[RMDB]
RNA sequence: GGGAACGACUCGAGUAGAGUCGAAAAGGGCGCAACAAACUUUGCACGCUCACGCCUCUGAUCGCAGAGACUUUUGUUACACGCGCGAGCAAUGGGACCAAGCGUUGACGCAUGACCCGUUGUGGAACGCGGCACAACGGCAGCUUAAGCGAGAAGGUCUCUCUCCCGAUUUCGAUCGGGAGAGAGAAAAAGAAACAACAACAACAAC
Reactivity to 2A3 in 0.01 (KOAc 150mM, MgCl2 10mM, bicine 150mM(pH8.5), 24C), signal-to-noise 1, nucleotides 027 to 156: g000g050g000c080g080c080a110a010c030a150a230a210c190u160u180u100g060c110a040c090g000c000u060c030a010c040g090c030c010u020c040u110g080a210u140c000g000c030a070g030a060g050a300c020u000u070u040u040g070u040u080a060c120a000c090g040c020g020c040g000a030g000c000a010a000u020g000g000g040a060c100c000a010a000g000c010g030u060u300g100a100c090g000c020a020u070g020a030c000c000c000g030u000u000g050u000g040g020a080a000c000g060c000g000g040c020a000c020a030a080c000g000g000c020a050g030c050u020u070a210a000g010c000g000a000g040a020a000g000g030
Notes: The data come from the RNA Mapping Database (RMDB), library OK3TST. This 207-nucleotide RNA was probed chemically with 2A3. The reactions ran in a buffer of 150 mM KOAc, 10 mM MgCl2 and 150 mM bicine (pH 8.5), at 24 C. 2A3 adducts were read by reverse transcription with SuperScript II with manganese.